[RMDB]
RNA sequence: GGGAACGACUCGAGUAGAGUCGAAAAUUUUUGCGAGUUUGGACGGUUCAAUCAGCUCUAUAGUGCCAGCCAAAGACGCCGUCUAUAAACGUCUCCAACUAGUCCAAACUCGGCUUACAAGACACGAGCACUCAUUAGUGUUCGCACUAAUGAGUGCAAAAGAAACAACAACAACAAC
Reactivity to DMS in 0.01 (KOAc 150mM, MgCl2 10mM, bicine 150mM(pH8.5), 24C), signal-to-noise 1, nucleotides 027 to 126: u000u010u000u000u000g010c010g010a040g020u000u000u000g010g000a000c020g040g000u010u000c190a100a080u020c170a050g050c060u000c080u010a060u000a080g010u000g020c040c040a040g040c020c020a090a140a030g010a020c040g000c070c070g010u020c110u010a050u000a080a120a190c100g010u000c040u000c120c160a060a060c020u000a110g000u010c000c000a000a030a020c000u000c000g000g000c030u000u000a110c090a010a080g000a180c180a080c210g010a140
About this RNA
Structure probing data (DMS) for a 177-nucleotide construct. DMS adducts were read by reverse transcription with MarathonRT. The DMS profile rests on 694 reads. The RNA was probed in 150 mM KOAc, 10 mM MgCl2 and 150 mM bicine (pH 8.5) at 24 C. Source: RMDB library OK2TST, as collected in RNAgym.